About this RNA: An RNA of 207 nucleotides, treated with 2A3 and read out base by base. Source: RMDB library OK3TST, as collected in RNAgym. For 2A3, 1,021 sequencing reads were counted. The RNA was probed in 150 mM KOAc, 10 mM MgCl2 and 150 mM bicine (pH 8.5) at 24 C. Reactivities are given for positions 27 through 156.
RNA sequence: GGGAACGACUCGAGUAGAGUCGAAAAGCCAUCUCCACGCAAAACCUAAUACCUGGCAGAUGGUGGUGAGGGCAGAAGAUGCCAUUCUCCGGGGAGACUGCGAAAGGAGGAGGCAGCCCUGGGGCUUUCAUUGGAGGCCAGAAGAGAUGAGGGAGGACCGCUAAUUAAAUUUCGAUUUAAUUAGCGGAAAAGAAACAACAACAACAAC
Reactivity to 2A3 in 0.01 (KOAc 150mM, MgCl2 10mM, bicine 150mM(pH8.5), 24C), signal-to-noise 2, nucleotides 027 to 156: g010c000c000a030u030c000u020c000c010a060c060g010c050a070a070a120a150c060c040u170a160a090u100a190c010c000u010g020g000c050a010g010a040u060g000g030u030g030g000u040g020a120g010g030g000c030a010g030a130a000g060a080u080g010c000c010a020u110u030c030u000c010c000g020g000g000g000a040g010a040c010u040g000c020g080a180a080a030g020g000a010g000g000a010g020g000c040a020g000c010c000c030u000g000g000g000g050c030u000u140u120c090a130u050u140g010g010a010g030g000c030c020a050g030a060a000g020a010g010a040u080g010a040g000g030g050a010g000g000a010